The record gives the reactivity of an RNA of 207 nucleotides to 2A3 and DMS. Conditions: 150 mM KOAc, 10 mM MgCl2 and 150 mM bicine (pH 8.5), 24 C. The data come from the RNA Mapping Database (RMDB), library RNAMAK. For 2A3 the reverse transcriptase was SuperScript II with manganese.
[RMDB]
RNA sequence: GGGAACGACUCGAGUAGAGUCGAAAAGCGUACUACAACGCGACGUAAGAGACAUGGCUCUGCAAGUCGAGAGUCCCAAAUAGGACUCUCGUCACCAGAGCCAACAGCUCUUACCAAGCGUUGUAUCGCAAAACUACGCCGUAUUCGUACGGCGUAGCAUGCAAUGUCGUUUCGACGACAUUGCAUGAAAAGAAACAACAACAACAAC
Reactivity to 2A3 in 0.01 (KOAc 150mM, MgCl2 10mM, bicine 150mM(pH8.5), 24C), signal-to-noise 3, nucleotides 027 to 156: g010c010g030u090a080c130u000a000c020a010a000c000g000c000g020a020c020g000u000a000a000g000a000g010a010c070a150u040g000g000c000u000c000u000g030c100a200a300g020u000c000g000a000g000a000g010u010c000c020c050a170a240a080u300a090g000g010a000c000u000c000u000c000g000u020c000a040c060c000a000g000a000g000c010c010a000a000c000a000g000c000u000c010u010u010a000c010c000a020a010g000c000g010u000u010g000u000a000u090c010g000c000a010a010a000a070c000u000a000c000g000c000c000g000u000a030u030u140c290g070u050a000c000g000g000c010g000u010a000g000
Reactivity to DMS in 0.01 (KOAc 150mM, MgCl2 10mM, bicine 150mM(pH8.5), 24C), signal-to-noise 2, nucleotides 027 to 156: g040c060g030u010a140c230u000a030c000a030a000c000g020c020g010a300c300g000u000a000a000g010a000g000a060c130a300u020g000g030c000u010c000u000g020c010a020a140g020u000c000g010a050g010a030g000u000c000c000c010a030a110a080u000a040g000g000a030c000u000c000u000c030g000u000c040a090c140c010a040g000a010g040c000c010a010a010c120a080g010c020u000c010u000u000a060c000c020a030a300g020c010g020u000u000g010u020a020u010c000g000c010a120a040a110a180c000u000a010c000g020c010c010g080u000a060u000u010c270g030u000a000c000g010g000c010g030u000a000g030